Chemical mapping of a 177-nucleotide RNA with 2A3. Reactivities are given for positions 27 through 126. For 2A3 the reverse transcriptase was SuperScript II with manganese.
[RMDB]
RNA sequence: GGGAACGACUCGAGUAGAGUCGAAAAUCUACGGCUUUAUGUGUUGUAUCCUCUGGUUUGUGAAGAUCCUACCAAGACUAUUCCCGGACACGUACAUCUAAGGGCUAAAGUUCUUUCUACUAAUAUAGAACGUGGAGGUUUUCGAACCUCCACGUUCAAAAGAAACAACAACAACAAC
Reactivity to 2A3 in 0.01 (KOAc 150mM, MgCl2 10mM, bicine 150mM(pH8.5), 24C), signal-to-noise 1, nucleotides 027 to 126: u000c010u000a080c020g010g000c030u020u100u210a070u110g040u000g010u040u000g000u030a140u010c000c030u010c000u000g050g030u030u140u140g080u110g020a120a040g010a000u020c000c000u000a020c020c020a010a000g030a030c030u090a100u120u050c000c080c000g100g000a000c010a000c010g100u090a060c000a140u000c060u130a090a050g030g040g000c000u130a210a170a030g060u010u000c020u020u060u010c010u020a180c000u040a100a210u080a030u000a100